[RMDB]
RNA sequence: GGGAACGACUCGAGUAGAGUCGAAAAGAUAUGGAGUCAGGUAUGGGACGUUGAAACUAGUCGGAAACGACUAGUGGAGUCCGUACUGACUCCUAAGUCAAACGUCAAGACCUUCGGGUCUUGACGAGCUAAUAUUGAUGUUCGCAUCAAUAUUAGCAAAAGAAACAACAACAACAAC
Reactivity to DMS in 0.01 (KOAc 150mM, MgCl2 10mM, bicine 150mM(pH8.5), 24C), signal-to-noise 3, nucleotides 027 to 126: g010a050u000a300u010g010g000a030g020u000c000a010g000g000u020a050u010g020g040g010a010c000g010u000u020g000a180a140a040c000u000a000g010u000c000g010g000a090a100a190c010g010a010c010u000a000g010u000g000g000a070g010u000c000c020g010u000a030c010u000g010a010c000u000c000c000u000a000a060g010u000c020a120a120a270c010g000u000c000a000a010g000a010c000c000u000u010c260g030g000g010u000c000u000u000g000a000c000g000a030
Reactivity to 2A3 in 0.01 (KOAc 150mM, MgCl2 10mM, bicine 150mM(pH8.5), 24C), signal-to-noise 7, nucleotides 027 to 126: g020a020u050a030u130g000g010a000g000u010c020a020g160g200u290a140u300g270g050g030a030c110g110u300u050g000a000a000a000c000u000a000g000u000c000g000g000a060a050a060c010g000a000c000u010a000g010u010g000g000a010g010u000c010c000g000u020a040c000u000g010a000c010u000c000c000u000a030a000g000u000c030a080a060a060c010g000u000c000a010a000g000a000c000c000u090u160c300g170g000g000u000c000u000u000g000a000c000g000a010

This 177-nucleotide RNA was probed chemically with DMS and 2A3.
Values cover nucleotides 27 to 126.
The 2A3 profile rests on 34,072 reads.
High 2A3 reactivity points to a flexible backbone, as in loops and unpaired stretches.
DMS adducts were read by reverse transcription with MarathonRT.
Source: RMDB library TTRDES, as collected in RNAgym.
Conditions: 150 mM KOAc, 10 mM MgCl2 and 150 mM bicine (pH 8.5), 24 C.
2A3 adducts were read by reverse transcription with SuperScript II with manganese.